RNA sequence: GGGAACGACUCGAGUAGAGUCGAAAAGAUAUGGAAUGACCCGCCUAUGAAGAAGCAUGGAACUACGCUACUGACUCGGAAACGAGUCAGAGCGCCAUGCGUAAAAUAGGCGGGUCAUUCCUAAGUCGAAAAGCAGUAACUUCGGUUACUGCUUUUCAAAAGAAACAACAACAACAAC
Reactivity to DMS in 0.01 (KOAc 150mM, MgCl2 10mM, bicine 150mM(pH8.5), 24C), signal-to-noise 1, nucleotides 027 to 126: g000a050u000a300u020g040g010a060a000u000g040a000c000c030c040g030c000c000u010a020u000g000a060a270g110a300a300g040c000a000u010g010g000a190a040c010u020a300c090g010c000u000a020c010u000g020a020c000u000c000g000g000a060a120a290c000g000a010g000u010c000a000g000a020g000c000g020c010c000a010u000g010c030g040u000a000a150a300a000u000a020g000g000c000g000g000g000u000c000a000u000u000c000c000u000a000a060g020u000c160

Overview
An RNA of 177 nucleotides, treated with DMS and read out base by base. High DMS reactivity at an A or C suggests that its Watson-Crick edge is free. Source: RMDB library TTRINS, as collected in RNAgym.